[RMDB]
RNA sequence: GGGAACGACUCGAGUAGAGUCGAAAAUGGUGUUAAGUGGAAUAAGUGGCGCCAUAUACAUAUAUGUACAGGGGGCUACAUAUAUGUAUAUGCCCCCUCGCGUCAGUAUAAGUAGGUAUAAGGUGGACAUUACCAGUAUGUUCGCAUACUGGUAAUGAAAAGAAACAACAACAACAAC
Reactivity to 2A3 in 0.01 (KOAc 150mM, MgCl2 10mM, bicine 150mM(pH8.5), 24C), signal-to-noise 7, nucleotides 027 to 126: u130g020g010u060g020u110u090a160a070g060u050g120g100a100a100u130a220a070g070u030g030g020c010g010c020c010a000u000a010u010a020c030a000u110a000u010a010u040g020u020a020c100a100g030g000g000g010g000c010u020a010c020a010u060a010u030a020u040g040u020a020u000a000u030g000c000c000c000c000c000u000c010g000c000g020u010c010a010g060u060a040u020a190a050g090u100a030g080g020u070a110u020a140a030g060g010u050g000g000a000
Reactivity to DMS in 0.01 (KOAc 150mM, MgCl2 10mM, bicine 150mM(pH8.5), 24C), signal-to-noise 6, nucleotides 027 to 126: u010g000g020u010g020u000u000a050a100g020u000g000g000a100a050u020a090a100g020u010g010g000c040g000c040c050a020u000a010u000a020c050a020u020a010u000a020u000g000u010a030c140a120g010g000g000g020g010c150u000a010c030a040u000a030u010a020u010g010u000a020u010a030u020g000c030c010c010c010c020u010c040g010c030g010u000c040a040g000u000a030u010a030a130g000u010a030g000g020u010a050u020a060a080g010g020u000g000g010a210
The record gives the reactivity of an RNA of 177 nucleotides to 2A3 and DMS. The data come from the RNA Mapping Database (RMDB), library OK1LIB. DMS adducts were read by reverse transcription with MarathonRT. The DMS profile rests on 26,103 reads.